[RMDB]
Annotation: Conditions: 150 mM KOAc, 10 mM MgCl2 and 150 mM bicine (pH 8.5), 24 C. The record gives the reactivity of an RNA of 177 nucleotides to 2A3. For 2A3, 1,234 sequencing reads were counted. The data come from the RNA Mapping Database (RMDB), library RFM100.
RNA sequence: GGGAACGACUCGAGUAGAGUCGAAAACAGAGCAUGAGUUGCAUGACUGAUGCUUGGUAUCAAUAUGAUACCUCUGUGUGUUCAGCAGACCCUCGCUGGAUUCAUGGAACCUCUUCUACACGUCGACAUCGCGCAGCGAUUUCGAUCGCUGCGCGAUAAAAGAAACAACAACAACAAC
Reactivity to 2A3 in 0.01 (KOAc 150mM, MgCl2 10mM, bicine 150mM(pH8.5), 24C), signal-to-noise 3, nucleotides 027 to 126: c050a020g080a000g020c000a000u060g060a050g040u030u100g080c180a150u300g010a010c020u050g030a010u010g020c000u000u090g000g000u010a000u000c050a160a200u120a140u300g000a000u000a010c010c000u000c030u000g000u010g000u010g010u010u030c010a000g010c020a020g010a230c040c010c030u090c070g010c010u010g010g000a020u010u000c000a000u020g020g000a000a030c020c030u040c070u110u010c020u060a060c050a010c080g110u100c070g060a020c040